[RMDB]
Structure probing data (DMS and 2A3) for a 207-nucleotide construct.
RNA sequence: GGGAACGACUCGAGUAGAGUCGAAAAUGCUGUCGUUGACAGCGCCCAACGCUUCACAACCUGAAAGAAGCGCCUGUUAUCAGGACGGUUGAUCCAUUUACCGGUGCAGACCUCUGCAAACACCGUGUUUAACAAGCAUCUUUCGAGAUGCUUGUAAUCGAAUAGUUGGGUUCGCCCAACUAUUCGAAAAAGAAACAACAACAACAAC
Reactivity to DMS in 0.01 (KOAc 150mM, MgCl2 10mM, bicine 150mM(pH8.5), 24C), signal-to-noise 2, nucleotides 027 to 156: u000g040c010u000g020u000c000g000u000u000g000a010c010a020g030c070g020c070c060c000a160a050c040g010c010u000u000c000a190c090a050a150c070c030u000g000a130a210a300g000a020a020g010c000g010c020c070u000g040u000u000a250u010c070a040g020g020a140c110g000g050u000u010g000a300u010c000c080a150u000u000u000a050c040c000g040g020u000g000c020a150g040a210c080c090u000c050u000g000c050a140a110a040c000a030c010c030g000u000g000u000u000u000a060a090c010a000a020g010c010a010u000c010u000u000u020c280g000a050g020a000u000g000c000u000u000g020u000a010a100
Reactivity to 2A3 in 0.01 (KOAc 150mM, MgCl2 10mM, bicine 150mM(pH8.5), 24C), signal-to-noise 4, nucleotides 027 to 156: u170g020c010u010g000u030c050g300u070u210g010a010c000a010g000c000g010c000c000c000a050a030c000g010c010u020u020c050a040c000a120a000c000c000u020g010a010a030a000g000a000a010g010c000g070c000c000u110g010u150u220a190u300c010a000g010g000a020c060g010g020u000u020g010a050u040c050c010a050u120u120u180a050c040c020g000g000u000g000c020a020g120a230c050c100u210c080u180g000c020a020a100a010c050a000c010c020g020u030g090u170u110u090a050a020c000a010a000g000c000a000u000c000u000u100u150c180g090a010g000a020u000g000c000u000u000g000u000a000a000

The reactions ran in a buffer of 150 mM KOAc, 10 mM MgCl2 and 150 mM bicine (pH 8.5), at 24 C. Values cover nucleotides 27 to 156. The 2A3 profile rests on 1,956 reads. For DMS, 2,626 sequencing reads were counted. DMS adducts were read by reverse transcription with MarathonRT. It was measured as part of the RMDB library M2RFPK.